RNA sequence: GGGAACGACUCGAGUAGAGUCGAAAAGGGGUCCACUUAUUAGACCAUAGGGAGCUUCGGGUACUGAAGCCUCCACGGUAUCUCUAGCGUGAGCUUUGAUCUAUGGUAUUCUAAGUGGACGGAGGCACCCAAACGGUAUCCCUUCGGGGAUACCGAAGUGCACCUUAUUGUUCGCAAUAAGGUGCACAAAAGAAACAACAACAACAAC
Reactivity to 2A3 in 0.01 (KOAc 150mM, MgCl2 10mM, bicine 150mM(pH8.5), 24C), signal-to-noise 1, nucleotides 027 to 156: g060g020g050g000u000c000c000a010c000u010u010a050u060u280a080g010a010c000c010a000u000a010g000g000g010a020g010c000u010u040c040g000g000g000u010a020c000u010g030a100a030g000c010c000u000c000c000a000c000g020g020u000a010u010c080u010c090u160a100g140c050g200u230g100a000g030c030u300u300u020g000a010u000c000u000a000u000g010g000u040a140u060u110c030u010a000a010g010u000g000g000a000c000g000g000a000g000g050c010a030c000c000c000a090a020a010c020g000g000u010a000u020c000c000c000u040u060c290g060g000g000g000a010u000a000c000c000g000a040a040
The data come from the RNA Mapping Database (RMDB), library RNAMAK. The record gives the reactivity of an RNA of 207 nucleotides to 2A3. Values cover nucleotides 27 to 156. The reactions ran in a buffer of 150 mM KOAc, 10 mM MgCl2 and 150 mM bicine (pH 8.5), at 24 C.